[RMDB]
RNA sequence: GGGAACGACUCGAGUAGAGUCGAAAAUACUGUACGUGAUCUGGCCUGCGGCCCGGCCGUACACGGCCUACGAUCGGCCAUGACGGCCUCGUGGCCCGUACGAUCUGCAGCGCGCGAUCGUACAGCGAUCAUGUCAGGUCUUCGGACCUGACAUGAUAAAAGAAACAACAACAACAAC
Reactivity to DMS in 0.01 (KOAc 150mM, MgCl2 10mM, bicine 150mM(pH8.5), 24C), signal-to-noise 3, nucleotides 027 to 126: u000a110c050u000g010u000a000c010g020u000g010a060u010c020u010g030g000c010c030u000g010c070g010g030c140c060c070g000g010c060c010g030u000a110c030a020c090g000g020c010c000u000a100c130g020a080u020c190g010g000c010c010a080u020g020a110c140g010g010c010c030u000c040g030u000g040g010c020c000c060g010u000a120c020g000a040u000c020u010g030c030a080g040c150g040c080g010c090g000a030u000c000g010u000a010c000a060g000c110g000
Reactivity to 2A3 in 0.01 (KOAc 150mM, MgCl2 10mM, bicine 150mM(pH8.5), 24C), signal-to-noise 2, nucleotides 027 to 126: u170a030c040u020g020u030a010c030g060u070g060a060u060c050u090g120g040c030c020u020g010c090g020g040c020c080c030g020g010c000c020g000u050a050c000a020c030g020g000c010c000u100a090c100g070a110u200c110g000g000c010c000a010u130g100a050c090g000g030c040c000u040c020g010u070g020g020c000c040c000g000u040a010c010g000a020u000c030u120g000c010a070g070c020g030c010g020c040g120a000u000c010g000u000a000c000a010g000c040g030

The record gives the reactivity of an RNA of 177 nucleotides to DMS and 2A3.
2A3 adducts were read by reverse transcription with SuperScript II with manganese.
For DMS the reverse transcriptase was MarathonRT.
The reactions ran in a buffer of 150 mM KOAc, 10 mM MgCl2 and 150 mM bicine (pH 8.5), at 24 C.